An RNA of 177 nucleotides, treated with DMS and 2A3 and read out base by base.
Reactivities are given for positions 27 through 126.
For 2A3 the reverse transcriptase was SuperScript II with manganese.
The reactions ran in a buffer of 150 mM KOAc, 10 mM MgCl2 and 150 mM bicine (pH 8.5), at 24 C.
For 2A3, 5,408 sequencing reads were counted.
[RMDB]
RNA sequence: GGGAACGACUCGAGUAGAGUCGAAAAUCGUAAUCCUCCGGCCACGGGCUAGUGCCGACACCCAGCCCGACCCGGUUGCCGAUCAGGGCGGCUAGGGAACCGGCCUGCUUUGCCACCAGAGCCGGCGGUUCCUAUUGUCUUUCGAGACAAUAGGAACAAAAGAAACAACAACAACAAC
Reactivity to DMS in 0.01 (KOAc 150mM, MgCl2 10mM, bicine 150mM(pH8.5), 24C), signal-to-noise 5, nucleotides 027 to 126: u010c090g000u000a120a100u010c010c020u000c000c000g000g000c030c040a250c120g010g010g020c020u000a030g020u000g020c010c010g010a080c200a200c020c020c020a050g020c030c010c040g010a180c070c000c010g010g010u000u010g020c170c130g000a040u000c060a110g020g000g000c030g010g000c010u000a110g020g000g020a110a110c180c000g020g030c040c150u000g000c060u000u010u000g010c040c030a090c160c040a130g000a300g000c010c030g000g000c160g000
Reactivity to 2A3 in 0.01 (KOAc 150mM, MgCl2 10mM, bicine 150mM(pH8.5), 24C), signal-to-noise 3, nucleotides 027 to 126: u100c010g020u050a020a100u040c010c000u000c000c010g020g000c000c020a090c140g000g020g000c020u030a020g010u010g130c000c010g030a020c020a050c070c000c020a010g030c030c030c050g110a250c010c010c030g020g070u030u110g170c070c100g050a060u060c050a050g020g000g000c030g000g000c030u120a240g000g000g010a010a010c010c000g000g000c000c010u020g020c000u140u170u140g010c010c010a070c010c030a040g020a010g050c010c000g010g010c030g050